[RMDB]
RNA sequence: GGGAACGACUCGAGUAGAGUCGAAAAGAAGCGAGUUCGCUCGCUUCAAAAAAGCGUACUACAAUUGAGGGGGAGAGGAAUCACUCCCAAAUAGGAGUGACCUCGAGGAUCCUACCCACCAAUUGUAUCGCAAAAAAGGUCAGAUUCGUCUGACCAAGUAUCAGUACACCUUCGGGUGUACUGAUACAAAAGAAACAACAACAACAAC
Reactivity to 2A3 in 0.01 (KOAc 150mM, MgCl2 10mM, bicine 150mM(pH8.5), 24C), signal-to-noise 1, nucleotides 027 to 156: g000a000a000g000c010g010a000g000u110u060c160g060c090u000c000g000c000u050u000c010a000a000a000a000a000a000g060c050g020u090a100c030u020a000c020a040a060u020u020g000a080g030g000g000g000g000a060g000a000g060g000a130a170u030c030a000c000u010c020c000c020a080a160a040u180a020g020g040a000g000u010g000a020c000c000u010c010g000a030g000g010a020u030c010c020u090a220c030c050c000a080c000c020a010a000u010u030g000u010a010u280c040g000c000a030a030a030a030a030a030g000g000u030c000a000g000a030u070u070c130g040u000c140u000g030a010c010c010a010a010
Overview
Structure probing data (2A3) for a 207-nucleotide construct. The reactions ran in a buffer of 150 mM KOAc, 10 mM MgCl2 and 150 mM bicine (pH 8.5), at 24 C. 2A3 adducts were read by reverse transcription with SuperScript II with manganese. Reactivities are rounded to 0.1 and cut off at 0 and 3.